[RMDB]
RNA sequence: GGGAACGACUCGAGUAGAGUCGAAAACUCAGGAAAAUUAUUUUCUUUGCUUAAAUGUGCUAAUAAUAUAGAUUCUGUACCUUCAUUAAUAAGUUCAACGCAGAAAUUAGCUGCAUCUUCAUUGGAUGCAUGACCACGUCUUCGGACGUGGUCAUGCAAAAGAAACAACAACAACAAC
Reactivity to 2A3 in 0.01 (KOAc 150mM, MgCl2 10mM, bicine 150mM(pH8.5), 24C), signal-to-noise 1, nucleotides 027 to 126: c000u000c000a000g300g000a000a000a000a000u300u000a100u000u270u000u030c100u300u000u050g010c000u240u170a020a020a020u270g000u290g050c050u000a050a050u030a050a000u140a000u000a050g070a290u000u130c000u050g000u000a000c000c000u000u170c070a240u080u210a300a100u000a180a080g000u080u000c000a000a000c300g000c000a000g000a000a020a000u000u000a000g050c000u000g000c000a000u070c050u300u000c000a290u020u010g170g000a050u000
This 177-nucleotide RNA was probed chemically with 2A3.